[RMDB]
An RNA of 177 nucleotides, treated with 2A3 and DMS and read out base by base. It was measured as part of the RMDB library TTRDES. The reactions ran in a buffer of 150 mM KOAc, 10 mM MgCl2 and 150 mM bicine (pH 8.5), at 24 C. Reactivities are given for positions 27 through 126. High 2A3 reactivity points to a flexible backbone, as in loops and unpaired stretches.

RNA sequence: GGGAACGACUCGAGUAGAGUCGAAAAGAUAUGGAUCUUGCGUCAGAUGCAACAGCAGGCUUCGGAAACGAAGCCUGACAUGCAUCUGACGACCCAAGAUCCUAAGUCAAAGCGCAGUUCGCUGCGCGCAAGAUAUGAGGUUCGCCUCAUAUCUUGCAAAAGAAACAACAACAACAAC
Reactivity to 2A3 in 0.01 (KOAc 150mM, MgCl2 10mM, bicine 150mM(pH8.5), 24C), signal-to-noise 6, nucleotides 027 to 126: g040a030u110a060u190g000g000a010u010c000u010u010g030c010g010u000c000a000g020a020u010g000c030a090a100c060a300g100c000a000g000g000c010u000u010c010g020g020a080a070a060c010g000a000a000g000c010c000u020g010a000c000a000u020g000c000a000u000c000u000g000a000c000g000a000c010c010c000a000a000g000a000u010c000c000u020a170a050g060u040c080a150a130a040g000c000g000c000a020g010u090u140c230g070c180u000g000c000g000c010
Reactivity to DMS in 0.01 (KOAc 150mM, MgCl2 10mM, bicine 150mM(pH8.5), 24C), signal-to-noise 9, nucleotides 027 to 126: g010a040u010a300u010g010g000a000u000c000u000u000g030c040g020u000c000a010g000a000u000g000c000a020a070c300a170g010c010a000g000g000c000u000u000c000g010g000a130a120a280c000g000a010a000g010c000c000u000g000a010c060a210u000g000c010a010u000c000u000g000a010c000g010a030c250c300c060a010a000g010a010u000c000c000u000a020a090g010u010c040a100a090a230g010c010g020c010a020g010u010u020c270g020c010u010g010c000g000c010